[RMDB]
RNA sequence: GGGAACGACUCGAGUAGAGUCGAAAAGCCUUUUGCUCAACAUCACUAUCCUUUUGAAAAUAAAGAGGUAUUUGAAAAAACUUUCCCAGCACAAUUUAUAUCAGAAGCAGUAGACCAAACAAGAGGAUGGUUUUAUACAUUAACAGCAAUAUCAACAAAAUAUGCUAAAUUUCGAUUUAGCAUAUUUAAAAGAAACAACAACAACAAC
Reactivity to 2A3 in 0.01 (KOAc 150mM, MgCl2 10mM, bicine 150mM(pH8.5), 24C), signal-to-noise 3, nucleotides 027 to 156: g040c010c000u020u090u070u070g050c030u040c050a050a060c020a140u100c060a050c040u030a030u040c010c000u040u030u020u040g080a120a140a070a070u190a080a110a010g030a030g010g030u040a060u070u110u100g060a120a080a000a010a030a030c010u040u060u040c010c010c010a010g020c010a010c010a060a030u090u300u130a110u150a030u170c030a020g060a120a000g030c030a000g020u060a020g030a020c020c020a000a050a110c010a050a000g000a010g010g010a010u010g020g000u020u020u090u070a040u030a050c060a030u070u170a100a020c010a020g110c010a020a040u140a030u280c020a000a060c020a030
Reactivity to DMS in 0.01 (KOAc 150mM, MgCl2 10mM, bicine 150mM(pH8.5), 24C), signal-to-noise 2, nucleotides 027 to 156: g000c040c030u020u000u000u010g000c040u000c030a090a130c100a110u000c110a060c020u000a070u000c010c000u000u010u000u010g010a080a090a130a140u000a080a050a090g020a070g040g020u000a030u000u000u020g000a010a070a050a070a120a050c060u000u000u010c030c020c010a120g050c100a100c030a060a040u010u000u010a050u000a060u040c060a110g010a070a100g050c060a050g040u010a090g010a090c040c010a110a030a140c030a060a060g000a030g030g020a090u010g000g030u000u010u000u000a100u000a120c090a120u010u000a070a100c040a070g010c010a040a080u010a140u000c050a030a100c060a090